Record summary
The record gives the reactivity of an RNA of 177 nucleotides to DMS and 2A3. The RNA was probed in 150 mM KOAc, 10 mM MgCl2 and 150 mM bicine (pH 8.5) at 24 C. For DMS the reverse transcriptase was MarathonRT.
RNA sequence: GGGAACGACUCGAGUAGAGUCGAAAACUCCACCUACGGGCGUCACGUCAGCGUGGCCGCGCCCGGCGUGGACGUGAUGCUGGCCUCACCGCUGUUCAUCAACGCGGACGGCACCCGCAAGACGGGCUGCGUAAAAACUAUUCGUAGUUUUUACGCAAAAAGAAACAACAACAACAAC
Reactivity to DMS in 0.01 (KOAc 150mM, MgCl2 10mM, bicine 150mM(pH8.5), 24C), signal-to-noise 9, nucleotides 027 to 126: c080u000c010c030a070c080c060u010a140c070g000g000g000c020g020u000c010a030c030g010u000c080a130g010c040g030u010g010g000c060c180g000c100g020c020c020c020g010g010c250g020u000g000g010a020c050g020u010g000a060u000g000c060u000g010g010c010c020u000c170a170c080c020g000c020u010g020u000u010c190a110u010c140a070a030c040g000c010g000g010a120c140g000g000c010a140c050c010c000g010c050a110a110g010a170c050g010g000g020c210
Reactivity to 2A3 in 0.01 (KOAc 150mM, MgCl2 10mM, bicine 150mM(pH8.5), 24C), signal-to-noise 7, nucleotides 027 to 126: c010u000c010c010a030c010c050u170a120c110g040g010g010c010g060u200c020a000c010g020u020c040a070g070c050g050u050g030g040c030c070g090c020g010c020c010c000g000g010c030g120u030g030g000a020c040g000u020g020a030u050g010c060u060g080g000c000c010u030c060a110c030c010g020c070u140g040u120u090c090a210u100c070a140a030c040g010c000g010g010a030c010g010g000c010a040c000c010c000g010c080a120a040g080a090c020g030g000g000c050